[RMDB]
RNA sequence: GGGAACGACUCGAGUAGAGUCGAAAAAGACCACCUCUACGGAGGUGGUCAAGUCACGUAGCUAGUACCAGGUUGCAAUACUAGAGCGUUAGUCCUGGGGCGUACGGUGGCAGUACGCUGCCGCCGAUAAAACUUGAAUACUUCGGUAUUCAAGUAAUCUAUACAGCACGUUCGCGUGCUGUAUAGAAAAAGAAACAACAACAACAAC
Reactivity to 2A3 in 0.01 (KOAc 150mM, MgCl2 10mM, bicine 150mM(pH8.5), 24C), signal-to-noise 2, nucleotides 027 to 156: a000g010a010c010c000a010c020c000u030c000u020a060c300g090g000a000g030g000u050g000g000u010c000a000a010g020u000c000a000c010g010u010a010g060c000u010a000g010u050a200c010c000a010g010g010u010u010g000c000a020a000u010a010c000u010a000g000a000g010c150g100u140u230a020g000u060c000c000u020g000g000g030g020c130g080u170a050c010g000g000u000g000g000c000a000g010u050a020c180g010c080u000g010c000c000g000c000c030g000a020u090a000a100a000a000c010u000u010g000a020a000u000a000c000u000u060c170g090g000u010a010u000u000c010a000a010g000u000a020a000
Reactivity to DMS in 0.01 (KOAc 150mM, MgCl2 10mM, bicine 150mM(pH8.5), 24C), signal-to-noise 1, nucleotides 027 to 156: a180g000a040c000c110a010c010c000u000c000u010a100c300g090g010a040g030g030u010g050g030u000c000a020a020g010u010c040a150c050g060u000a160g020c010u000a030g000u000a060c010c010a090g030g000u000u000g000c030a140a050u020a020c020u000a020g000a300g000c050g000u000u000a080g020u000c010c000u000g040g000g000g040c140g020u000a060c030g000g030u030g010g010c000a030g010u000a120c300g020c010u000g010c000c010g020c000c020g000a090u000a010a050a140a050c000u010u000g000a050a010u000a010c010u010u010c270g010g020u000a000u010u000c000a010a020g020u010a010a030
An RNA of 207 nucleotides, treated with 2A3 and DMS and read out base by base. Reactivities are given for positions 27 through 156.